[RMDB]
An RNA of 177 nucleotides, treated with 2A3 and DMS and read out base by base. For 2A3 the reverse transcriptase was SuperScript II with manganese. Reactivities are given for positions 27 through 126. The 2A3 profile rests on 8,118 reads. The DMS profile rests on 4,522 reads.
RNA sequence: GGGAACGACUCGAGUAGAGUCGAAAAAAUUGGAGCGUAAUCGCGUCUUGACGUGAGUGAGCCUAGACUGUAGGCUAUCCCAAGUGGGAUAGCAUAGCUCAGAAUACGCUGAUCUACAGUCAUACAAGAAGGUAUCAUCAUUCGUGAUGAUACCUUCAAAAGAAACAACAACAACAAC
Reactivity to 2A3 in 0.01 (KOAc 150mM, MgCl2 10mM, bicine 150mM(pH8.5), 24C), signal-to-noise 5, nucleotides 027 to 126: a000a020u180u120g020g010a000g000c000g000u020a000a030u010c000g000c000g010u000c060u090u190g150a010c010g000u010g010a020g020u020g000a000g010c000c000u010a060g000a010c000u010g000u010a010g010g010c000u010a000u020c020c010c020a170a150g300u300g030g000g000a000u010a000g000c000a000u040a000g000c000u000c010a010g100a060a020u030a000c010g000c000u030g040a070u050c000u010a000c000a000g000u010c000a030u120a040c090a040a090
Reactivity to DMS in 0.01 (KOAc 150mM, MgCl2 10mM, bicine 150mM(pH8.5), 24C), signal-to-noise 4, nucleotides 027 to 126: a070a050u010u000g010g000a050g010c010g010u010a030a100u000c010g010c000g020u000c080u010u000g020a020c000g010u000g010a040g020u000g010a020g010c000c050u000a080g000a020c010u000g000u010a010g020g000c010u000a000u000c000c000c000a300a170g000u020g010g020g000a010u000a000g000c000a100u010a030g010c000u000c010a070g010a160a080u000a000c010g000c000u000g000a120u000c000u000a000c010a010g010u010c020a160u010a090c200a070a100